[RMDB]
An RNA of 177 nucleotides, treated with 2A3 and read out base by base. The RNA was probed in 150 mM KOAc, 10 mM MgCl2 and 150 mM bicine (pH 8.5) at 24 C.
RNA sequence: GGGAACGACUCGAGUAGAGUCGAAAACGGUGCGCACGAGGUCCUCAGGUAGCGGGAUGCCUUCCUCGUGGAGGUCGGCGAGGAGGUGGAUGGCCUGGUAGUGGAAGCCGGCCUGGGAGAGGGCGCGCGCAGUCCGGCAAUUCGUUGCCGGACUGCGAAAAGAAACAACAACAACAAC
Reactivity to 2A3 in 0.01 (KOAc 150mM, MgCl2 10mM, bicine 150mM(pH8.5), 24C), signal-to-noise 1, nucleotides 027 to 126: c040g070g060u080g000c040g040c020a000c050g110a000g000g170u040c010c000u000c090a040g000g140u160a060g060c100g040g070g000a090u130g010c010c000u130u050c020c010u060c040g030u090g030g050a010g060g120u180c000g010g000c000g010a030g030g020a010g000g010u080g060g010a050u160g020g020c000c060u120g030g060u130a190g070u050g180g110a040a050g010c000c080g000g010c000c040u010g050g000g020a290g070a060g000g080g060c000g010c000g050
Reactivities are given for positions 27 through 126. Source: RMDB library OK2TRN, as collected in RNAgym.